The record gives the reactivity of an RNA of 177 nucleotides to DMS and 2A3.
The 2A3 profile rests on 1,102 reads.
DMS adducts were read by reverse transcription with MarathonRT.
[RMDB]
RNA sequence: GGGAACGACUCGAGUAGAGUCGAAAAUACGCAGCAAUCUUCUGAAGAUGUGACCGAUCAUCAGCUAUUGGCCACGUCCUCCCAUGAAUCAGUCGGUUUAGAAUCCGCUGAGGUGGAAGCCUUGAAAGCUUCUCAGGUAGUUCGCUACCUGAGAAGCAAAAGAAACAACAACAACAAC
Reactivity to DMS in 0.01 (KOAc 150mM, MgCl2 10mM, bicine 150mM(pH8.5), 24C), signal-to-noise 1, nucleotides 027 to 126: u010a110c090g000c020a080g010c080a020a090u000c020u000u010c050u000g000a130a070g000a030u000g010u000g010a000c010c000g000a010u000c060a140u050c080a110g030c270u010a070u010u010g030g050c040c000a040c000g030u010c010c040u010c010c050c020a070u010g030a070a070u010c000a010g020u060c050g000g000u000u000u020a080g010a150a110u000c020c040g010c030u010g000a010g000g030u010g000g000a090a050g000c020c030u020u010g000a070a130a180
Reactivity to 2A3 in 0.01 (KOAc 150mM, MgCl2 10mM, bicine 150mM(pH8.5), 24C), signal-to-noise 1, nucleotides 027 to 126: u090a020c060g040c040a000g020c010a090a120u010c040u050u020c050u120g080a030a070g000a030u010g000u010g030a050c040c010g000a000u000c010a040u000c030a040g040c020u050a010u020u060g020g000c070c000a020c000g000u020c010c030u030c020c040c000a150u140g070a020a070u070c020a010g150u270c020g020g040u030u020u110a050g040a030a080u040c010c020g080c110u030g010a000g040g000u010g030g060a000a060g020c000c010u030u080g130a020a030a010